The data come from the RNA Mapping Database (RMDB), library OK2TRN. This 177-nucleotide RNA was probed chemically with 2A3 and DMS. The RNA was probed in 150 mM KOAc, 10 mM MgCl2 and 150 mM bicine (pH 8.5) at 24 C. In probing experiments dimethyl sulfate is read out at A N1 and C N3, which are open when not base-paired.
RNA sequence: GGGAACGACUCGAGUAGAGUCGAAAAAUCUUGAAGUCAAUGUUAAGAAGAUAACAAGGGGUAUUUGUACCAUAUAGGCCAUACCAGCCUUCAACAUUGCCUCAUGCAUUGCCUUUUAUCUAUCCGGAGUCUUAACUGCAUUCGUGCAGUUAAGACUAAAAGAAACAACAACAACAAC
Reactivity to 2A3 in 0.01 (KOAc 150mM, MgCl2 10mM, bicine 150mM(pH8.5), 24C), signal-to-noise 1, nucleotides 027 to 126: a000u030c010u020u070g020a030a000g020u040c000a010a020u040g000u010u120a120a060g050a030a090g010a260u140a100a120c040a150a120g050g030g020g030u040a070u090u100u070g030u010a070c040c000a010u110a040u080a270g020g020c020c040a020u030a080c020c000a000g000c010c000u000u060c030a020a010c020a010u000u050g000c040c020u010c010a020u090g070c020a020u020u000g040c010c000u000u080u090u120a140u040c070u040a070u050c050c060g120g090
Reactivity to DMS in 0.01 (KOAc 150mM, MgCl2 10mM, bicine 150mM(pH8.5), 24C), signal-to-noise 2, nucleotides 027 to 126: a050u000c040u000u010g000a070a020g010u000c010a040a030u000g000u000u000a140a160g020a120a060g000a070u000a080a090c190a120a070g010g010g010g010u000a000u010u010u010g050u020a030c120c100a070u010a090u000a080g000g020c230c070a050u000a070c200c110a140g000c060c000u020u000c090a050a020c030a030u010u000g000c020c010u010c050a080u010g000c060a010u000u000g000c060c030u000u000u000u000a050u040c120u000a080u010c070c060g030g010